[RMDB]
RNA sequence: GGGAACGACUCGAGUAGAGUCGAAAAAUGAGCCAUCUGGGGAAUUGCAUUUGAGUCAGAGGGAAUUGCAAGGUCAGAGCCCAGAGGCAAAGAGGCCAGUGUGGCUGUCAGGGAGGAGAGGAGGUCACAGAGAGAUGUGUUAGAGAGUGGGGAGUGAGAUGAGUGAUAGGUUCGCCUAUCACUCAUCAAAAGAAACAACAACAACAAC
Reactivity to 2A3 in 0.01 (KOAc 150mM, MgCl2 10mM, bicine 150mM(pH8.5), 24C), signal-to-noise 2, nucleotides 027 to 156: a000u130g000a020g000c010c000a190u000c040u000g000g000g030g040a070a060u050u030g010c020a040u020u080u210g070a060g030u110c140a060g010a080g060g070g000a040a020u120u040g000c020a000a030g070g000u090c070a030g010a030g170c000c010c010a030g020a010g000g010c000a080a020a000g090a000g000g020c090c030a030g080u070g040u050g080g050c030u060g090u050c050a020g030g010g020a060g030g010a060g020a020g090g000a050g020g000u030c030a030c050a070g080a000g010a000g000a050u040g000u000g020u030u110a010g010a010g000a010g070u090g000g000g010g000a070g010u060g040a040
The record gives the reactivity of an RNA of 207 nucleotides to 2A3. Source: RMDB library OK3TST, as collected in RNAgym. Reactivities are given for positions 27 through 156. For 2A3 the reverse transcriptase was SuperScript II with manganese.